Description:
An RNA of 177 nucleotides, treated with DMS and 2A3 and read out base by base. The reactions ran in a buffer of 150 mM KOAc, 10 mM MgCl2 and 150 mM bicine (pH 8.5), at 24 C. For DMS the reverse transcriptase was MarathonRT. 2A3 adducts were read by reverse transcription with SuperScript II with manganese.
RNA sequence: GGGAACGACUCGAGUAGAGUCGAAAAGGUUCACAUCGCCAUCGUGGUCGACGAGUACGGUGGUGUAUCGGGUAUCGUAUGCCUGGAGGACAUCAUAGAAGAGAUCGUGGGCGACAUACAGGACGAGCGCAGCAAUUGAUUUCGAUCAAUUGCUGCGAAAAGAAACAACAACAACAAC
Reactivity to DMS in 0.01 (KOAc 150mM, MgCl2 10mM, bicine 150mM(pH8.5), 24C), signal-to-noise 2, nucleotides 027 to 126: g010g000u010u000c010a070c110a070u000c020g020c000c010a080u000c030g050u010g010g000u000c010g010a140c100g030a060g000u040a050c070g000g050u010g000g000u000g000u000a040u010c030g000g000g000u020a030u000c190g010u020a300u000g040c020c010u010g010g010a070g000g000a070c090a050u000c040a080u000a150g020a130a100g000a110g010a050u000c100g010u000g000g000g000c020g010a070c050a080u000a060c140a070g000g000a070c040g010a110g030
Reactivity to 2A3 in 0.01 (KOAc 150mM, MgCl2 10mM, bicine 150mM(pH8.5), 24C), signal-to-noise 1, nucleotides 027 to 126: g060g000u100u060c030a040c010a120u050c040g000c010c010a050u110c020g010u030g050g110u020c020g100a160c070g000a080g190u020a030c040g030g000u000g000g000u000g010u020a060u070c060g000g000g000u030a050u100c080g010u080a040u110g030c010c000u040g120g000a040g090g070a030c000a030u040c020a010u030a160g100a230a000g030a090g010a020u040c020g020u080g040g010g000c020g000a010c040a010u100a070c000a050g000g060a010c040g040a030g040